[RMDB]
RNA sequence: GGGAACGACUCGAGUAGAGUCGAAAAGGGCUUUAAGUUCGCUUAAAGCCCAAAAACCUUUGUGCAUUGUCAGUCGUGUCCACUGGGCCCAUUGGGCCUUGGACCGACUUGGAUUUAUGCACUCUGGUAAAGACCUAGUUGUUUCGACAACUAGGUCGUAUUAUGGAAGUUUCGACUUCCAUAAUACAAAAGAAACAACAACAACAAC
Reactivity to DMS in 0.01 (KOAc 150mM, MgCl2 10mM, bicine 150mM(pH8.5), 24C), signal-to-noise 2, nucleotides 027 to 156: g010g040g010c020u010u000u000a010a010g030u010u010c300g020c020u000u000a010a010a030g040c000c000c000a000a010a020a100a000c010c000u000u000u000g000u000g020c000a020u000u000g000u010c020a040g010u010c010g020u000g020u000c010c010a060c300u010g090g020g030c000c000c010a300u010u000g100g050g010c000c010u000u010g000g010a030c000c010g000a010c010u000u010g040g000a050u000u000u000a010u000g010c010a030c010u010c050u000g000g020u010a070a120a100g000a030c010c010u000a010g020u010u000g010u000u000u000c300g030a150c020a010a020c000u000a000g000g030u000c000
Reactivity to 2A3 in 0.01 (KOAc 150mM, MgCl2 10mM, bicine 150mM(pH8.5), 24C), signal-to-noise 4, nucleotides 027 to 156: g000g000g010c010u020u000u010a030a010g000u050u070c110g030c150u010u010a000a010a020g000c020c010c040a000a000a000a000a000c010c000u000u000u000g000u010g000c000a020u020u020g000u020c000a000g000u000c020g060u080g010u300c030c000a080c210u160g020g030g020c020c010c070a300u210u300g030g000g000c000c000u010u000g000g000a000c000c000g000a000c000u000u040g000g010a010u130u200u200a000u020g000c000a000c000u020c000u020g020g010u070a240a140a020g000a000c000c000u000a000g000u000u020g040u040u160u100c180g110a020c010a000a000c000u000a000g000g000u000c000